Structure probing data (2A3 and DMS) for a 207-nucleotide construct. For 2A3, 708 sequencing reads were counted. Conditions: 150 mM KOAc, 10 mM MgCl2 and 150 mM bicine (pH 8.5), 24 C.

RNA sequence: GGGAACGACUCGAGUAGAGUCGAAAAUACAUAGCAGUUAGCGAUGCAGAAGGAUUCAACAUUCCCCCAGUUGAGGCAAUGAGCGUCGGAACACCACUAAUUUACGUGAAUAAGCAUGCAUAUAAAGAUUAUGCAUGCGGGAUAGAGAUAGACAACGAGCAUGUAUGUACUUCGGUACAUACAUGCUAAAAGAAACAACAACAACAAC
Reactivity to 2A3 in 0.01 (KOAc 150mM, MgCl2 10mM, bicine 150mM(pH8.5), 24C), signal-to-noise 2, nucleotides 027 to 156: u080a000c090a020u140a000g000c020a030g060u030u050a000g030c020g040a000u020g030c040a010g110a200a020g100g030a230u060u010c050a060a040c060a170u200u240c000c000c000c000c000a030g000u000u000g000a010g000g140c020a040a030u140g070a060g010c020g010u050c030g010g000a000a000c020a000c000c040a050c120u080a060a110u090u190u160a060c050g070u140g050a070a100u300a010a000g000c000a000u000g000c000a000u000a000u020a010a150a000g060a110u120u000a000u000g000c010a000u000g000c020g040g000g000a010u050a000g020a000g010a030u010a040g070a030c120a120a000c030g070
Reactivity to DMS in 0.01 (KOAc 150mM, MgCl2 10mM, bicine 150mM(pH8.5), 24C), signal-to-noise 2, nucleotides 027 to 156: u000a020c090a070u000a080g000c020a090g040u000u000a050g040c050g040a060u000g040c020a110g040a120a150g010g000a110u000u010c020a040a130c050a090u000u000c010c010c000c010c000a250g000u000u000g000a020g010g010c090a110a090u000g000a130g030c150g050u010c030g000g000a110a070c040a050c000c010a020c040u010a050a080u000u000u000a010c060g000u000g010a080a100u000a100a200g030c000a000u010g020c000a010u000a020u000a070a080a180g000a200u000u000a000u000g020c000a000u010g020c000g010g020g020a050u000a080g000a040g020a090u000a060g000a100c070a060a110c170g030